[RMDB]
RNA sequence: GGGAACGACUCGAGUAGAGUCGAAAAGGGAGGGCCAAGCGUAUCAUCGAUCUGUCGGUCGGUAUGGUAAGUGACGCAAGCUGUAUGGUAAGUGACGCAAGCUGAAAGAAGAGCGCUGAACAGCAGAGGUACGCUUUAUCUUCGGAUAAAGCGUACCAAAAGAAACAACAACAACAAC
Reactivity to 2A3 in 0.01 (KOAc 150mM, MgCl2 10mM, bicine 150mM(pH8.5), 24C), signal-to-noise 3, nucleotides 027 to 126: g000g030g030a010g000g030g050c030c030a040a020g050c030g020u110a050u050c010a040u080c060g060a040u070c030u200g100u190c140g000g070u000c000g000g060u110a080u060g000g020u080a030a060g030u010g080a020c080g010c040a020a040g030c020u020g010u190a140u110g040g080u140a090a190g020u100g100a030c040g040c010a020a060g050c000u050g020a070a000a010g040a000a060g020a000g000c020g000c030u050g030a100a030c010a030g000c000a000g010a020
Reactivity to DMS in 0.01 (KOAc 150mM, MgCl2 10mM, bicine 150mM(pH8.5), 24C), signal-to-noise 3, nucleotides 027 to 126: g000g020g000a100g000g000g030c080c090a070a100g010c070g020u000a060u030c050a040u010c040g030a010u030c070u000g000u020c040g010g000u000c020g000g000u030a060u050g000g000u020a020a170g010u000g020a090c080g000c030a080a130g000c010u000g010u010a100u030g020g000u010a060a090g010u010g010a100c080g000c060a020a130g020c050u000g020a060a080a140g010a150a140g010a130g000c080g000c000u000g010a050a060c060a080g000c100a080g010a250